[RMDB]
The record gives the reactivity of an RNA of 177 nucleotides to DMS. The RNA was probed in 150 mM KOAc, 10 mM MgCl2 and 150 mM bicine (pH 8.5) at 24 C. For DMS, 1,200 sequencing reads were counted.
RNA sequence: GGGAACGACUCGAGUAGAGUCGAAAAAACAUCUCCAAGUGACACUACCUCUCCGAUUUUGCCUUUUUCUCACCCUGAAACCCUAUCCUCUUGGGCUCUGUUAGAUGGGUGGGCAAUCAUUACCUAAUAUAAGGGAUGCAUUCGUGCAUCCCUUAUAAAAAGAAACAACAACAACAAC
Reactivity to DMS in 0.01 (KOAc 150mM, MgCl2 10mM, bicine 150mM(pH8.5), 24C), signal-to-noise 1, nucleotides 027 to 126: a060a060c090a130u000c050u000c030c060a070a080g030u020g010a060c050a040c030u000a080c050c010u000c030u000c030c040g000a090u000u000u010u020g030c040c040u000u000u000u000u000c010u000c030a060c010c000c000u000g000a180a050a120c040c010c010u000a070u010c060c070u010c080u010u000g000g000g020c070u000c040u000g010u000u010a050g010a100u000g030g020g020u030g000g010g020c180a030a020u010c100a090u000u000a070c100c010u000a020a060